Chemical mapping of a 177-nucleotide RNA with DMS and 2A3.
Values cover nucleotides 27 to 126.
Source: RMDB library TTRDES, as collected in RNAgym.
The RNA was probed in 150 mM KOAc, 10 mM MgCl2 and 150 mM bicine (pH 8.5) at 24 C.

RNA sequence: GGGAACGACUCGAGUAGAGUCGAAAAGAUAUGGACGUCAUAGGACAUGCCUGGGGUGUCGGAAACGACACAAAGGCAACAGCCUAUACGUCCUAAGUCAAAAGAUAGGGACUUCGGUCCCUAUCAAGUUCUAUUUACAGUUCGCUGUAAAUAGAACAAAAGAAACAACAACAACAAC
Reactivity to DMS in 0.01 (KOAc 150mM, MgCl2 10mM, bicine 150mM(pH8.5), 24C), signal-to-noise 9, nucleotides 027 to 126: g000a020u000a190u010g010g000a020c000g010u000c300a010u000a000g000g010a040c070a300u010g020c000c000u000g010g020g020g020u000g010u000c000g010g000a050a030a070c000g020a020c000a000c010a020a060a010g010g020c010a070a070c250a170g000c000c000u000a000u000a010c010g000u000c000c000u000a000a050g010u010c010a120a110a150a130g000a020u000a000g000g010g010a010c000u000u020c230g040g010u000c000c000c000u000a000u000c010a040a100
Reactivity to 2A3 in 0.01 (KOAc 150mM, MgCl2 10mM, bicine 150mM(pH8.5), 24C), signal-to-noise 6, nucleotides 027 to 126: g010a000u020a010u080g000g000a000c000g010u050c160a020u000a010g010g000a060c210a280u300g000c000c010u130g030g050g020g130u010g000u010c000g000g000a020a020a010c010g000a000c000a010c010a020a110a000g010g010c070a080a040c090a050g000c000c000u000a010u000a010c010g000u000c000c000u000a000a000g000u010c020a040a040a080a170g000a000u000a010g000g000g000a000c000u060u080c300g150g010u000c000c000c000u000a000u000c000a000a000
2A3 adducts were read by reverse transcription with SuperScript II with manganese.